This 207-nucleotide RNA was probed chemically with DMS and 2A3. The reactions ran in a buffer of 150 mM KOAc, 10 mM MgCl2 and 150 mM bicine (pH 8.5), at 24 C. Values cover nucleotides 27 to 156. 2A3 is a SHAPE reagent: it acylates the 2'-hydroxyl of flexible nucleotides of all four kinds.
[RMDB]
RNA sequence: GGGAACGACUCGAGUAGAGUCGAAAAUAAAUAAUUUAGGAUUUGUGGGCUAUAUGGUCUCUGUCUUAGCCACUCAAGUCUGCCAUUAUAGUGUUAAAAGUAUCCAGAGACAGCGAACAUUUUAUGAUCCAGUAAAACAGAAGAUGAAUCAGAUGUGCUCUAAUGCAAGGUUCGCCUUGCAUUAGAGAAAAGAAACAACAACAACAAC
Reactivity to DMS in 0.01 (KOAc 150mM, MgCl2 10mM, bicine 150mM(pH8.5), 24C), signal-to-noise 1, nucleotides 027 to 156: u000a060a150a090u000a060a130u000u010u030a150g030g010a130u000u000u000g020u000g020g010g000c000u000a080u000a040u010g000g010u040c030u040c020u010g030u000c040u010u000a050g000c060c010a160c040u000c070a090a100g020u020c010u000g000c080c040a050u000u000a070u060a020g010u000g020u000u010a070a070a030a160g000u000a080u000c050c010a140g000a080g020a090c020a050g040c080g030a060a060c040a120u010u000u000u010a090u020g020a110u010c010c000a130g020u010a030a010a080a270c080a090g010a020a030g020a090u010g010a000a040u020c030a080g010a110u000g020u000g030
Reactivity to 2A3 in 0.01 (KOAc 150mM, MgCl2 10mM, bicine 150mM(pH8.5), 24C), signal-to-noise 2, nucleotides 027 to 156: u130a010a010a020u170a020a090u090u030u190a030g010g000a010u070u020u100g030u030g000g000g020c020u050a040u010a050u150g110g050u050c080u000c030u050g070u010c010u070u030a010g010c000c000a220c040u000c000a020a020g030u000c040u030g040c000c000a020u110u090a060u110a090g070u050g100u060u100a110a170a040a020g040u020a060u010c020c020a010g000a000g000a030c010a000g010c020g050a030a060c030a090u020u040u030u190a070u140g020a020u060c080c050a030g050u120a040a070a030a060c040a050g050a070a020g070a070u110g030a000a050u090c000a040g010a090u100g040u100g110